Background:
An RNA of 170 nucleotides, treated with DMS and 2A3 and read out base by base. The 2A3 profile rests on 17,346 reads.
RNA sequence: GGGAACGACUCGAGUAGAGUCGAAAAACGUUGAUAUCGAUUUACUCCGAGGAGACGAACUACCACGAACAGGGGACACUCUACCCGUGGCGUCUCCGUUUGACGAGUAAGUCCUAAGUCAACAUGCCGGGCAGAGACUUCGGUCUCUGCAAAAGAAACAACAACAACAAC
Reactivity to DMS in 0.01 (KOAc 150mM, MgCl2 10mM, bicine 150mM(pH8.5), 24C), signal-to-noise 4, nucleotides 027 to 129: a080c140g050u030u010g020a050u000a000u040c300g000a030u000u010u030a110c000u020c000c040g010a000g040g010a040g050a030c000g100a080a040c000u100a290c050c010a050c050g040a080a270c130a000g050g000g010g040a090c300a090c080u020c010u060a000c110c070c020g000u000g020g000c060g010u010c010u050c010c080g040u050u070u070g020a110c300g020a040g010u000a040a050g010u000c010c060u060a050a130g000u000c020a000a040c010a050u020g020c000c050g020g040
Reactivity to 2A3 in 0.01 (KOAc 150mM, MgCl2 10mM, bicine 150mM(pH8.5), 24C), signal-to-noise 6, nucleotides 027 to 129: a010c070g000u010u010g000a010u030a010u100c020g010a000u000u000u000a000c000u000c020c010g020a030g010g000a000g010a000c000g010a090a040c070u150a100c120c000a000c000g040a100a040c060a150g050g010g020g110a040c130a080c230u050c010u020a050c000c020c000g000u000g000g020c010g010u000c000u010c010c000g010u040u030u080g030a020c000g000a000g000u000a000a000g000u000c000c000u110a150a070g000u000c000a010a000c000a010u090g050c010c000g030g080